[RMDB]
About this RNA:
Source: RMDB libraries RFM100 and RFMREP, as collected in RNAgym. Chemical mapping of a 177-nucleotide RNA with 2A3 and DMS. For DMS the reverse transcriptase was MarathonRT. The reactions ran in a buffer of 150 mM KOAc, 10 mM MgCl2 and 150 mM bicine (pH 8.5), at 24 C.

RNA sequence: GGGAACGACUCGAGUAGAGUCGAAAAUAUACUUUGCCGUUAGCGCGAUAGCAUUUAUAAUGUACGCGUUAAUGAGUAGGAGGGCGUGAAGGUCGUGAAGAAGCUCGUGGCGUGAGCCUGAGUGAAAUCAAAAACCUCGAUUCGUCGAGGUUUUUGAAAAAGAAACAACAACAACAAC
Reactivity to 2A3 in 0.01 (KOAc 150mM, MgCl2 10mM, bicine 150mM(pH8.5), 24C), signal-to-noise 2, nucleotides 027 to 126: u090a010u020a040c030u110u080u070g030c000c000g000u010u010a000g000c010g000c000g100a110u100a050g000c030a000u000u030u080a260u220a190a010u050g050u050a000c000g000c010g000u010u000a000a000u000g000a010g010u010a090g000g080a010g000g050g000c080g000u060g030a050a050g040g060u060c020g020u070g050a040a060g010a050a010g030c010u000c030g230u080g010g020c020g000u040g010a000g040c000c010u010g010a000g030u020g030a010a040a010
Reactivity to DMS in 0.01 (KOAc 150mM, MgCl2 10mM, bicine 150mM(pH8.5), 24C), signal-to-noise 3, nucleotides 027 to 126: u060a080u040a070c050u000u000u010g000c020c000g010u000u000a000g000c010g010c000g010a150u030a120g020c000a010u010u010u070a110u040a100a030u020g010u000a090c000g010c000g000u000u010a010a000u010g000a130g040u010a060g010g010a040g020g020g000c110g010u010g020a070a050g010g000u000c050g040u000g000a070a100g000a130a230g000c000u010c010g010u030g000g000c030g010u040g010a130g010c000c000u010g010a060g010u000g000a050a100a090